[RMDB]
RNA sequence: GGGAACGACUCGAGUAGAGUCGAAAAUUGCACUCCAGCCUGAGUGACAGAGUGACAUCCUGUCUCCAAAGGGGGAGAAAAUGGAGAGAAGGGUGUGGAAAGGGGCUGAUGGGAAGGGGAGCUCUCAGGAGCUGGCACUUUAGCUUAGACCAGGAUGUAUGUAGAACCAGUUCGCUGGUUCUACAUAAAAAGAAACAACAACAACAAC
Reactivity to 2A3 in 0.01 (KOAc 150mM, MgCl2 10mM, bicine 150mM(pH8.5), 24C), signal-to-noise 1, nucleotides 027 to 156: u100u070g010c070a060c080u020c010c010a060g090c070c010u090g010a040g000u090g040a070c050a010g040a010g040u090g050a060c000a000u000c000c000u040g030u070c010u000c020c010a040a170a040g020g010g020g090g000a010g120a030a050a020a000u180g000g000a040g000a000g050a030a130g040g000g020u090g010u050g060g010a130a110a050g000g020g060g000c070u120g000a120u050g010g000g000a030a080g000g000g010g000a040g000c010u010c000u020c100a020g020g030a010g040c020u000g010g010c010a010c100u060u010u090a010g000c000u070u030a050g040a120c030c050a010g040g000a000u090g050